RNA sequence: GGGAACGACUCGAGUAGAGUCGAAAACUACGGGCGGCCUACAGAGCCAGUGAUGUUGACUGGGACAGGCUCCAAGCCAUGUCCGAGGCGGAAUUGGGUUCAAAGAAGCGUUUCGUCCAUCGAGGUCACCAGACCUACCAUUCGUGGUAGGUCUGGUAAAAGAAACAACAACAACAAC
Reactivity to DMS in 0.01 (KOAc 150mM, MgCl2 10mM, bicine 150mM(pH8.5), 24C), signal-to-noise 2, nucleotides 027 to 126: c030u000a070c170g000g060g030c050g020g000c030c000u000a140c150a220g010a050g010c030c000a060g010u000g000a140u000g000u010u040g010a070c070u000g020g000g020a040c020a070g000g010c010u000c220c190a030a140g020c000c000a080u000g020u020c020c000g000a060g000g000c020g010g010a160a030u000u000g000g010g010u010u000c040a050a080a140g010a140a080g000c070g010u000u000u000c040g010u010c030c010a050u010c120g000a110g000g020u010c110
Reactivity to 2A3 in 0.01 (KOAc 150mM, MgCl2 10mM, bicine 150mM(pH8.5), 24C), signal-to-noise 1, nucleotides 027 to 126: c000u040a100c030g000g010g010c000g000g040c020c040u040a090c040a090g030a010g000c020c020a040g030u030g070a100u040g060u170u100g100a140c060u070g050g000g000a000c000a000g000g080c000u120c130c000a070a010g060c000c010a160u000g020u030c010c010g090a050g000g000c000g000g030a020a030u060u000g090g000g030u060u040c050a130a200a130g070a070a030g100c040g060u030u090u140c030g000u000c000c010a000u100c090g070a050g100g110u060c030